[RMDB]
RNA sequence: GGGAACGACUCGAGUAGAGUCGAAAACUAGGAGACUUGAAAAGGGAGAUCUCCACAUGUUAAUAAGUGAACACCUAGGAGAGUAUGAGUUGGCUGAUUACCUAGCAACAGUACAAGAUAUAGUAGCUAAGAUUGAAAAUAAGGAGGUACUCACUAACUGGGAUGAUAAGUUCGCUUAUCAUCCCAGAAAAGAAACAACAACAACAAC
Reactivity to DMS in 0.01 (KOAc 150mM, MgCl2 10mM, bicine 150mM(pH8.5), 24C), signal-to-noise 1, nucleotides 027 to 156: c030u000a120g020g010a110g000a100c070u000u000g020a060a120a210a090g060g000g040a080g010a100u000c030u030c000c030a090c070a090u000g000u000u030a060a170u000a110a120g030u000g000a040a060c070a070c040c000u000a060g030g000a220g040a080g100u000a110u000g030a150g040u010u000g010g060c030u000g000a100u000u000a080c040c030u000a020g020c000a030a040c040a180g010u000a060c040a090a060g030a300u000a080u000a040g040u000a070g000c040u000a060a010g000a140u010u030g000a010a050a110a170u040a010a050g010g010a030g030g010u000a070c040u000c030a020c150u020a020a260
Reactivity to 2A3 in 0.01 (KOAc 150mM, MgCl2 10mM, bicine 150mM(pH8.5), 24C), signal-to-noise 2, nucleotides 027 to 156: c010u020a050g000g030a050g030a020c030u110u180g040a140a160a040a060g050g040g030a010g050a070u060c010u060c080c020a060c000a000u080g010u110u050a140a070u070a280a110g050u020g120a090a040c020a040c060c000u010a000g060g010a030g020a000g010u040a000u070g040a060g020u040u020g050g030c000u010g030a110u100u070a100c000c050u040a040g010c020a010a000c010a040g020u060a040c020a050a000g070a010u090a010u090a170g080u030a010g050c030u040a050a030g020a090u120u280g080a090a020a080a070u120a120a030g030g000a020g010g000u040a040c030u020c120a010c020u000a060a000
The record gives the reactivity of an RNA of 207 nucleotides to DMS and 2A3. It was measured as part of the RMDB library OK3TST. For 2A3, 670 sequencing reads were counted. The RNA was probed in 150 mM KOAc, 10 mM MgCl2 and 150 mM bicine (pH 8.5) at 24 C. In probing experiments dimethyl sulfate is read out at A N1 and C N3, which are open when not base-paired. The DMS profile rests on 1,183 reads.